This 207-nucleotide RNA was probed chemically with 2A3 and DMS. Reactivities are given for positions 27 through 156. It was measured as part of the RMDB library OK3TST. The reactions ran in a buffer of 150 mM KOAc, 10 mM MgCl2 and 150 mM bicine (pH 8.5), at 24 C.
RNA sequence: GGGAACGACUCGAGUAGAGUCGAAAAGUCGCUACGGGAGAUAUAUCUGCGGACGUAUGAGAAUCUGCAAUCGAUUGAGAAUGAAAUGGCCGAGACCGUCCGAACGACGCUACUGGAUGGGUUGACCGACGGCGUCAAUCCGCGUGAGAUGGCGCGGCUAUUAAGGCCGUUUCGACGGCCUUAAUAGAAAAGAAACAACAACAACAAC
Reactivity to 2A3 in 0.01 (KOAc 150mM, MgCl2 10mM, bicine 150mM(pH8.5), 24C), signal-to-noise 3, nucleotides 027 to 156: g020u020c000g020c090u090a030c050g010g070g040a060g040a020u080a020u030a020u160c050u070g050c000g010g000a030c010g090u140a110u200g040a060g020a060a100u030c010u070g000c020a030a100u080c100g050a040u050u170g040a070g050a130a090u150g020a060a100a080u070g070g000c030c040g010a050g030a040c000c030g000u010c010c010g000a020a050c030g020a010c000g010c030u040a020c040u080g010g040a030u080g030g010g040u060u090g050a040c020c020g040a040c050g050g000c000g000u000c010a000a060u000c000c010g000c020g020u030g080a200g020a070u080g010g000c000g010c010g000g000
Reactivity to DMS in 0.01 (KOAc 150mM, MgCl2 10mM, bicine 150mM(pH8.5), 24C), signal-to-noise 3, nucleotides 027 to 156: g010u000c030g000c020u000a060c040g010g060g030a150g020a130u010a070u000a040u000c020u000g010c020g030g000a050c040g030u010a060u030g030a260g010a100a070u000c010u010g010c010a080a120u010c080g000a090u010u010g020a190g000a140a100u000g010a060a050a060u000g000g010c020c020g020a140g010a090c070c010g010u000c000c010g000a090a150c040g010a070c020g040c020u000a060c060u000g020g030a130u000g030g010g000u000u000g000a080c020c020g020a080c050g020g020c010g020u000c030a030a050u010c000c010g020c040g030u010g010a150g000a140u000g020g020c040g010c010g010g000